[RMDB]
RNA sequence: GGGAACGACUCGAGUAGAGUCGAAAAAAGGGAACGGGCUUGGAAUAAUCAGCGGGGAAAGAAGACCCUGUUGAGCUUGACUCUAGUCUGACGUUGUGAAAUGACUUGGGAGGUGUAGAAUAAGUGGAAUGACAGAUCUUUUCGAAGAUCUGUCAUUAAAAGAAACAACAACAACAAC
Reactivity to 2A3 in 0.01 (KOAc 150mM, MgCl2 10mM, bicine 150mM(pH8.5), 24C), signal-to-noise 6, nucleotides 027 to 126: a000a000g050g010g010a080a000c050g010g000g010c010u030u050g060g020a120a040u120a080a070u090c000a000g000c000g020g020g000g040a260a060a070g300a050a030g070a130c010c000c000u010g010u010u010g010a020g000c020u040u070g040a070c010u000c010u030a010g010u010c020u020g020a040c090g030u030u030g020u020g070a070a070a070u140g020a020c030u030u040g020g020g010a110g010g010u100g020u100a060g040a130a070u180a180a010g090u060g060g090
Reactivity to DMS in 0.01 (KOAc 150mM, MgCl2 10mM, bicine 150mM(pH8.5), 24C), signal-to-noise 5, nucleotides 027 to 126: a070a040g000g000g000a070a080c100g000g010g010c050u000u000g010g010a090a080u020a080a090u000c020a000g010c010g020g000g000g010a070a090a130g020a130a140g000a080c010c000c000u000g000u000u010g000a030g020c120u020u010g010a170c050u010c040u000a030g000u010c010u000g010a080c140g010u010u000g000u010g020a080a070a120u000g000a050c050u000u010g000g000g010a060g010g000u010g000u010a040g000a060a060u020a050a080g020u010g000g010